[RMDB]
RNA sequence: GGGAACGACUCGAGUAGAGUCGAAAACUGGAGGGUCUGAAAUUGCGAAACGGCGAAGUGGCAUAUCUAUAUAUCUCAGUGUGGUGGCUGCUCAUGUAGAUGGGUACCAUAUACGUUCUGCGGGGGGGCAUUUUAUACGCUUCGGCGUAUAAAAUGCAAAAGAAACAACAACAACAAC
Reactivity to DMS in 0.01 (KOAc 150mM, MgCl2 10mM, bicine 150mM(pH8.5), 24C), signal-to-noise 2, nucleotides 027 to 126: c050u010g000g000a090g010g010g020u010c010u010g000a110a090a080u010u030g000c030g000a010a130a120c160g010g000c040g020a060a080g000u010g000g030c050a050u020a060u010c100u000a080u000a090u020a030u020c060u000c030a060g000u010g030u010g000g020u000g000g010c130u020g020c020u030c060a030u000g030u000a070g000a040u010g000g000g030u000a040c060c030a030u010a080u010a080c080g000u010u010c050u020g010c020g030g010g000g000g000g010
Reactivity to 2A3 in 0.01 (KOAc 150mM, MgCl2 10mM, bicine 150mM(pH8.5), 24C), signal-to-noise 3, nucleotides 027 to 126: c020u020g060g010a040g010g090g010u020c000u020g060a100a100a080u060u040g050c100g110a090a070a020c030g080g000c040g020a060a010g030u060g020g040c010a060u040a060u090c060u050a040u020a060u000a070u120c090u020c090a100g040u060g010u040g050g090u020g000g020c050u040g000c000u000c010a020u070g010u090a070g040a200u030g000g030g030u020a020c000c000a000u070a010u030a090c060g030u060u020c030u050g030c030g030g000g000g000g030g030

An RNA of 177 nucleotides, treated with DMS and 2A3 and read out base by base. For 2A3, 1,396 sequencing reads were counted. DMS adducts were read by reverse transcription with MarathonRT.